Conditions: 150 mM KOAc, 10 mM MgCl2 and 150 mM bicine (pH 8.5), 24 C.
This 177-nucleotide RNA was probed chemically with 2A3 and DMS.
[RMDB]
RNA sequence: GGGAACGACUCGAGUAGAGUCGAAAAGAUAUGGAGACGGGUGGAGAUGAGAACUACGACACUCGGAAACGAGGUCGCUCAUCGCUGACCGUCUCCUAAGUCAAACGGUCUGGUUCGCCAGACCGAACAGUUUUCUUCUCUUCGGAGAAGAAAACUGAAAAGAAACAACAACAACAAC
Reactivity to 2A3 in 0.01 (KOAc 150mM, MgCl2 10mM, bicine 150mM(pH8.5), 24C), signal-to-noise 1, nucleotides 027 to 126: g070a030u080a070u130g010g020a010g030a010c000g030g040g090u150g030g060a060g010a000u000g000a000g000a110a080c130u300a040c250g020a010c190a290c300u020c000g010g040a030a020a010c000g000a010g000g000u000c000g000c050u010c000a010u000c000g000c040u010g020a020c010c030g010u000c000u000c010c000u010a000a010g020u000c010a020a020a060c010g000g000u040c000u010g040g030u050u070c250g000c070c000a000g000a000c000c000g000a000a000
Reactivity to DMS in 0.01 (KOAc 150mM, MgCl2 10mM, bicine 150mM(pH8.5), 24C), signal-to-noise 1, nucleotides 027 to 126: g000a030u000a300u030g000g000a010g030a000c000g010g000g000u000g010g000a060g000a010u000g000a040g000a030a060c140u010a300c040g010a000c000a150c000u000c020g000g000a070a070a150c000g000a030g000g000u010c000g030c020u000c000a000u000c000g010c010u000g000a030c000c000g000u000c000u000c000c000u000a000a030g000u010c000a120a140a200c000g010g000u000c000u000g000g020u000u010c230g000c000c000a000g000a010c000c000g010a010a040

For 2A3 the reverse transcriptase was SuperScript II with manganese.